[RMDB]
Background
Structure probing data (2A3) for a 177-nucleotide construct.
RNA sequence: GGGAACGACUCGAGUAGAGUCGAAAAGAAAGCCUUCCGGCGUCCCAGGCGGGGCGCCGCGGGACCGCCCUCGUGUCUGUGGCGGUGGGAUCCCGCGGCCGUGUUUUCCUGGUGGCCCGGCCAUGAACGGCCCUAAAAAUUUCGAUUUUUAGGGCCGAAAAGAAACAACAACAACAAC
Reactivity to 2A3 in 0.01 (KOAc 150mM, MgCl2 10mM, bicine 150mM(pH8.5), 24C), signal-to-noise 2, nucleotides 027 to 126: g050a090a090a020g050c000c030u080u000c000c000g030g030c060g020u010c000c000c000a000g030g000c020g000g000g040g000c020g020c000c000g000c000g000g000g000a000c000c010g010c000c030c000u030c020g210u250g250u120c140u240g130u120g110g040c080g100g000u040g020g050g010a110u000c000c000c000g000c000g010g010c060c030g010u050g130u010u080u100u050c000c000u050g070g000u110g090g000c010c000c000g000g000c050c030a080u120g020a070a050

Source: RMDB library RFM100, as collected in RNAgym.
The 2A3 profile rests on 786 reads.
2A3 adducts were read by reverse transcription with SuperScript II with manganese.
The RNA was probed in 150 mM KOAc, 10 mM MgCl2 and 150 mM bicine (pH 8.5) at 24 C.